[RMDB]
RNA sequence: GGGAACGACUCGAGUAGAGUCGAAAAGCAUGUUUAUGUGAACCUAAGAAUGAAUUUCAGUGACUGUAGAUUAGAAGCACUGAUUAUAGCAUAGGCUGCUUGGUGUUCACUUUAUUUGCAUCUGUGAGUUUCCAACAAGCCCUAAGUUUACUGACAAGAUCAUCCACCAUUUCGAUGGUGGAUGAUCAAAAGAAACAACAACAACAAC
Reactivity to 2A3 in 0.01 (KOAc 150mM, MgCl2 10mM, bicine 150mM(pH8.5), 24C), signal-to-noise 1, nucleotides 027 to 156: g010c000a000u100g030u030u030u100a080u070g040u000g010a010a040c010c030u000a050a000g090a080a090u170g040a140a110u000u050u000c000a000g040u030g160a240c040u120g060u290a100g050a250u200u120a070g060a170a000g000c000a000c000u000g040a030u020u090a060u040a040g000c040a120u050a200g090g020c010u010g000c000u070u000g000g020u050g000u030u050c020a000c000u130u080u000a050u040u270u130g060c050a050u050c070u000g030u000g010a040g000u020u120u090c110c000a020a050c020a030a010g100c000c000c000u080a070a000g010u010u000u080a250c050u040g090a070c070a140a020